About this RNA:
The record gives the reactivity of an RNA of 177 nucleotides to 2A3 and DMS. For 2A3, 12,105 sequencing reads were counted.
RNA sequence: GGGAACGACUCGAGUAGAGUCGAAAAGAGAAACCUCAGCGUAGGGGUAACAGCUCUGUUGAGGAGAGCAGUGCAAGUCGUGCCAAUGGAAAGUAGAUUGGGGUGCAUUGUACACCGUAGAUUUAGCACUUCGAAGGAAAUUCGUUUCCUUCGAAGUAAAAGAAACAACAACAACAAC
Reactivity to 2A3 in 0.01 (KOAc 150mM, MgCl2 10mM, bicine 150mM(pH8.5), 24C), signal-to-noise 8, nucleotides 027 to 126: g090a000g020a040a060a040c000c000u010c010a030g020c100g200u160a060g000g010g000g020u030a070a020c020a050g020c000u000c010u080g040u050u040g030a000g000g020a030g010a010g020c020a000g010u010g020c020a050a030g040u090c030g070u110g070c000c030a030a020u040g060g070a210a060a070g080u150a050g070a130u030u050g030g020g000g020u010g000c010a050u030u090g030u060a020c030a010c010c020g060u040a010g010a100u070u060u100a020g010c010
Reactivity to DMS in 0.01 (KOAc 150mM, MgCl2 10mM, bicine 150mM(pH8.5), 24C), signal-to-noise 7, nucleotides 027 to 126: g000a090g010a110a110a080c020c000u000c020a050g010c090g010u030a090g010g000g000g020u000a080a100c200a170g000c010u000c010u010g000u010u010g010a000g000g010a050g020a120g020c030a030g010u000g010c050a060a060g010u020c050g010u010g010c010c010a040a040u020g010g020a100a080a120g000u030a050g010a070u000u010g010g000g000g010u000g000c050a080u020u010g010u020a120c060a070c030c020g010u020a070g010a100u010u010u010a050g010c190